[RMDB]
RNA sequence: GGGAACGACUCGAGUAGAGUCGAAAAGAAAGAAAGAUUCUGCUCUCCCUCUCUCAUCCUUCGUCCCUGGGUGAGAGUGCUUUCCGAAUGCAAUGCACCUGGGCAAGGAUUCCAGAGGGCGAGGCAAAUGUUAUUAUACUUUCGAGUAUAAUAACAUAAAAGAAACAACAACAACAAC
Reactivity to 2A3 in 0.01 (KOAc 150mM, MgCl2 10mM, bicine 150mM(pH8.5), 24C), signal-to-noise 9, nucleotides 027 to 126: g080a020a070a010g120a030a100a010g100a080u110u050c030u080g040c000u010c010u010c020c010c000u000c000u000c010u010c020a010u000c010c000u030u040c070g160u240c020c010c030u090g030g010g000u000g010a020g030a040g010u000g000c000u070u100u060c070c070g220a160a050u190g000c000a000a020u030g010c000a000c000c000u010g000g000g000c000a010a010g010g000a010u050u010c040c010a000g000a000g000g000g000c010g000a010g020g000c020a100a130
Reactivity to DMS in 0.01 (KOAc 150mM, MgCl2 10mM, bicine 150mM(pH8.5), 24C), signal-to-noise 9, nucleotides 027 to 126: g010a070a070a080g010a090a110a110g000a110u010u010c030u000g000c010u010c010u000c000c010c000u000c000u000c100u010c250a070u000c000c000u010u000c180g000u040c020c000c030u030g020g000g010u000g010a010g000a280g000u000g000c000u000u010u020c230c180g010a100a050u010g010c010a020a020u010g000c000a010c010c000u000g000g010g000c020a030a020g000g000a020u000u010c280c300a020g000a020g010g000g010c060g000a020g000g010c080a050a090

Structure probing data (2A3 and DMS) for a 177-nucleotide construct. Source: RMDB libraries RFM100 and RFMREP, as collected in RNAgym. The RNA was probed in 150 mM KOAc, 10 mM MgCl2 and 150 mM bicine (pH 8.5) at 24 C. Values cover nucleotides 27 to 126.